An RNA of 177 nucleotides, treated with 2A3 and DMS and read out base by base. Conditions: 150 mM KOAc, 10 mM MgCl2 and 150 mM bicine (pH 8.5), 24 C. Reactivities are given for positions 27 through 126.
RNA sequence: GGGAACGACUCGAGUAGAGUCGAAAAGAGAUUGCUCCCACGUCCAAGGACGGCAGCAGGCGCGAAAAUUGCCCACUCUUUGCAGGAGGCAGUUAUGAGACGUGAAGAUGAGUAUCUUGUAAAGAGGCUAGGUAGACAUGUUCGCAUGUCUACCUAGAAAAGAAACAACAACAACAAC
Reactivity to 2A3 in 0.01 (KOAc 150mM, MgCl2 10mM, bicine 150mM(pH8.5), 24C), signal-to-noise 1, nucleotides 027 to 126: g050a000g030a030u020u170g040c000u020c030c000c000a010c030g020u000c020c010a020a060g140g030a070c000g010g020c000a010g000c040a010g150g000c040g000c000g130a060a000a000a100u080u110g000c010c000c010a090c000u000c000u040u130u150g000c040a010g010g000a020g030g000c030a000g030u050u040a140u130g080a090g010a040c030g040u060g080a100a000g110a170u070g000a010g050u010a010u030c000u020u030g090u050a070a040a000g090a010g100g000
Reactivity to DMS in 0.01 (KOAc 150mM, MgCl2 10mM, bicine 150mM(pH8.5), 24C), signal-to-noise 2, nucleotides 027 to 126: g000a080g000a070u000u030g030c020u000c020c040c010a060c040g030u000c000c080a110a160g020g020a110c070g010g000c090a080g030c130a050g010g010c060g000c030g030a070a060a050a050u000u000g000c000c020c070a160c030u000c010u000u000u020g010c070a060g000g020a090g000g000c000a050g020u010u010a100u010g010a240g020a050c040g010u000g000a120a100g010a110u000g010a090g030u000a050u000c020u010u020g010u000a030a050a060g000a030g000g010